Notes: This 177-nucleotide RNA was probed chemically with DMS and 2A3. 2A3 adducts were read by reverse transcription with SuperScript II with manganese. For DMS the reverse transcriptase was MarathonRT.
[RMDB]
RNA sequence: GGGAACGACUCGAGUAGAGUCGAAAACCGCCUACGCGGACUCGCAACAGUGUGGCCACGUCGUUUGUGGCACGGGUGCACACCCCCCGGCGCUCGGGAGCCACAUGAGCUGCUGCUGGCGCUGGGGAUAGAUGUAGGUCUUCGGACCUACAUCUAUAAAAGAAACAACAACAACAAC
Reactivity to DMS in 0.01 (KOAc 150mM, MgCl2 10mM, bicine 150mM(pH8.5), 24C), signal-to-noise 4, nucleotides 027 to 126: c010c000g010c040c060u030a100c210g000c040g000g000a160c100u040c030g020c060a090a100c200a130g030u000g020u010g020g000c020c000a060c010g010u030c150g020u010u000u040g010u000g000g010c040a030c120g000g000g030u010g010c080a060c090a130c060c130c000c000c010c000g010g000c010g000c000u000c030g040g000g010a030g010c000c030a210c160a160u090g000a160g010c050u000g000c010u000g000c210u000g000g000c010g000c000u000g000g000g010g000
Reactivity to 2A3 in 0.01 (KOAc 150mM, MgCl2 10mM, bicine 150mM(pH8.5), 24C), signal-to-noise 9, nucleotides 027 to 126: c010c000g040c010c080u150a090c130g010c040g020g110a120c030u050c080g100c040a080a180c060a170g030u030g010u070g180g060c020c000a120c040g090u150c040g030u090u170u280g090u090g030g000c020a000c000g020g010g010u130g030c030a010c000a040c030c000c000c000c000c000g000g000c000g000c020u110c020g010g010g010a010g020c020c010a230c070a190u230g070a040g030c040u110g020c000u030g030c030u060g040g000c000g000c000u000g000g000g010g000